An RNA of 207 nucleotides, treated with DMS and 2A3 and read out base by base.
The reactions ran in a buffer of 150 mM KOAc, 10 mM MgCl2 and 150 mM bicine (pH 8.5), at 24 C.
DMS adducts were read by reverse transcription with MarathonRT.

RNA sequence: GGGAACGACUCGAGUAGAGUCGAAAAUCUCCUCUUUUGAGGAGACCUGGUGAGAGCGCUAGGAAGGGCUUUUAACGUUGCAUUGCCCCUAUACACCUUUUAACUGGUGUAUAGUUUGCCUCGUGGGCCAAUUUAAGUUUGCGUAGGAAGCAACGAAAGUAUUGUGCGGGUUCGUUUGCAUGAUGCUAAAAGAAACAACAACAACAAC
Reactivity to DMS in 0.01 (KOAc 150mM, MgCl2 10mM, bicine 150mM(pH8.5), 24C), signal-to-noise 2, nucleotides 027 to 156: u000c000u000c000c000u010c000u000u000u000u020g020a020g000g000a010g010a010c010c020u000g020g020u010g000a100g030a090g020c050g030c040u010a070g020g020a140a090g000g010g010c000u010u000u000u000a050a130c030g020u000u000g000c020a170u000u000g030c020c010c060c010u000a010u000a000c000a010c010c000u000u010u000u010a060a180c190u000g010g020u000g020u000a010u000a010g010u000u000u000g010c010c020u000c020g010u000g010g040g000c000c040a050a130u010u000u010a080a090g020u000u000u010g020c000g020u010a090g020g000a100a130g020c010a020a070c030g010a080a100
Reactivity to 2A3 in 0.01 (KOAc 150mM, MgCl2 10mM, bicine 150mM(pH8.5), 24C), signal-to-noise 1, nucleotides 027 to 156: u000c010u020c010c040u000c030u040u190u100u290g000a000g000g010a000g000a010c010c000u010g000g000u030g010a150g000a020g030c030g000c020u000a010g000g040a030a020g010g020g000c000u000u050u020u050a070a020c020g000u000u000g000c010a020u030u050g010c000c000c000c000u000a000u000a000c000a000c000c000u000u020u030u090a070a040c050u030g000g000u000g000u000a000u000a000g000u000u050u090g020c010c000u010c000g010u000g000g020g000c030c020a020a030u010u080u090a090a010g000u000u020u000g000c000g020u030a010g000g020a040a000g000c000a000a010c000g030a040a030
Source: RMDB library OK3TST, as collected in RNAgym.
The 2A3 profile rests on 1,832 reads.
2A3 adducts were read by reverse transcription with SuperScript II with manganese.